About this RNA:
An RNA of 177 nucleotides, treated with 2A3 and DMS and read out base by base. The DMS profile rests on 2,524 reads. Values cover nucleotides 27 to 126. Source: RMDB library OK1LIB, as collected in RNAgym.

[RMDB]
RNA sequence: GGGAACGACUCGAGUAGAGUCGAAAACAGUGAUGGAAACAUCACUGAAAAACGUGGAAGCGCUCCACGAAAAAGUCGAUCGAAUACCGAUCGACAAGCGCUAAAGUCAUGCCGAAAGGCAUGACAACCAUCCCAGGAGUUUCGACUCCUGGGAUGGAAAAGAAACAACAACAACAAC
Reactivity to 2A3 in 0.01 (KOAc 150mM, MgCl2 10mM, bicine 150mM(pH8.5), 24C), signal-to-noise 3, nucleotides 027 to 126: c010a000g000u000g000a000u000g010g030a030a040a010c000a010u000c000a000c000u010g010a030a000a000a000a010c000g010u000g000g010a100a020g000c000g010c010u010c000c000a000c010g120a110a020a020a000a000g000u000c000g000a000u000c000g000a040a040u170a300c120c000g000a000u000c000g000a000c000a000a000g000c000g000c010u020a060a020a000g000u010c000a000u010g000c010c010g070a100a020a020g000g000c000a000u000g000a000c000a000a010
Reactivity to DMS in 0.01 (KOAc 150mM, MgCl2 10mM, bicine 150mM(pH8.5), 24C), signal-to-noise 2, nucleotides 027 to 126: c080a000g010u010g040a000u000g000g000a190a160a270c000a000u000c000a020c000u010g040a030a050a050a270a170c000g010u010g000g000a270a030g000c000g010c000u000c000c000a000c000g020a000a060a050a030a060g000u000c010g000a020u000c000g000a300a080u040a090c180c010g020a020u000c000g000a010c000a000a020g000c000g000c000u060a030a100a050g020u000c000a000u000g040c000c000g040a130a120a120g000g050c000a000u000g000a000c020a030a070